[RMDB]
RNA sequence: GGGAACGACUCGAGUAGAGUCGAAAAGAUAUGGAGCGUCCAAGCUCUUGGAUUUAUUACAGCCGAAAGGGUCGGAAACGACCCUAGUAGCUGCUGUAAUUGUCAGAGCUAAGGACGCUCCUAAGUCCUUACAUGUUUUGUUCGCAAAACAUGUAAGAAAAGAAACAACAACAACAAC
Reactivity to DMS in 0.01 (KOAc 150mM, MgCl2 10mM, bicine 150mM(pH8.5), 24C), signal-to-noise 3, nucleotides 027 to 126: g000a080u000a300u000g000g010a010g020c000g010u000c000c010a300a110g010c000u000c000u010u010g020g040a010u010u010u000a000u010u000a010c000a020g040c000c010g010a160a190a180g000g000g010u000c020g020g010a090a100a270c010g020a000c010c000c000u000a010g010u000a190g010c300u000g020c000u010g000u010a000a020u010u010g010u000c000a040g010a010g020c000u010a150a160g010g000a010c000g010c000u000c000c000u000a000a110g000u000c040
Reactivity to 2A3 in 0.01 (KOAc 150mM, MgCl2 10mM, bicine 150mM(pH8.5), 24C), signal-to-noise 1, nucleotides 027 to 126: g020a000u080a020u300g010g010a000g000c030g000u010c000c000a030a010g000c000u000c000u060u150g110g030a050u300u300u140a020u000u120a000c010a000g020c000c000g000a090a050a010g030g020g000u000c000g000g070a100a120a060c020g010a000c030c000c000u010a010g000u000a000g000c170u100g000c000u020g000u000a010a010u020u010g000u020c010a010g000a010g000c040u100a020a030g000g010a000c000g000c000u010c020c000u000a000a000g000u010c000
Structure probing data (DMS and 2A3) for a 177-nucleotide construct.
For 2A3 the reverse transcriptase was SuperScript II with manganese.
The data come from the RNA Mapping Database (RMDB), library TTRINS.
For DMS, 3,591 sequencing reads were counted.